[RMDB]
RNA sequence: GGGAACGACUCGAGUAGAGUCGAAAAUUAAGUGUUCAAAUGGGCCCGACUCUGCCACAUACAUUAUGCAGGAGCUGGCAAAGGCUUAGAGACAAAGAAGUCUCUCUUGAGUGUUUCCUAAUAACAGUCUAUUAUUGGUGUUCGCACCAAUAAUAGAAAAAGAAACAACAACAACAAC
Reactivity to 2A3 in 0.01 (KOAc 150mM, MgCl2 10mM, bicine 150mM(pH8.5), 24C), signal-to-noise 8, nucleotides 027 to 126: u130u060a110a020g070u040g050u140u100c070a050a070a130u150g020g030g010c020c010c010g090a120c020u020c010u030g030c010c030a050c010a070u210a050c040a080u120u220a070u260g030c020a030g030g100a030g020c050u020g020g000c000a070a070a010g020g000c010u030u030a030g020a000g000a060c020a040a170a040g170a140a020g050u000c000u000c000u000c000u010u010g000a000g000u000g000u020u020u000c010c000u040a100a060u090a090a020c030a020g050
Reactivity to DMS in 0.01 (KOAc 150mM, MgCl2 10mM, bicine 150mM(pH8.5), 24C), signal-to-noise 6, nucleotides 027 to 126: u030u020a110a110g010u010g010u010u010c090a070a110a160u020g020g000g020c020c020c050g000a190c080u000c060u000g000c030c100a080c110a060u030a110c190a110u020u030a040u020g010c070a070g000g000a060g000c090u000g000g010c050a040a110a110g010g020c020u010u010a010g000a130g000a030c020a070a080a130g010a120a130g010u000c010u000c000u000c010u010u000g000a020g000u010g000u000u000u000c000c010u000a080a070u030a050a050c160a090g000
Chemical mapping of a 177-nucleotide RNA with 2A3 and DMS. The reactions ran in a buffer of 150 mM KOAc, 10 mM MgCl2 and 150 mM bicine (pH 8.5), at 24 C. For 2A3 the reverse transcriptase was SuperScript II with manganese. It was measured as part of the RMDB libraries RFM100 and RFMREP.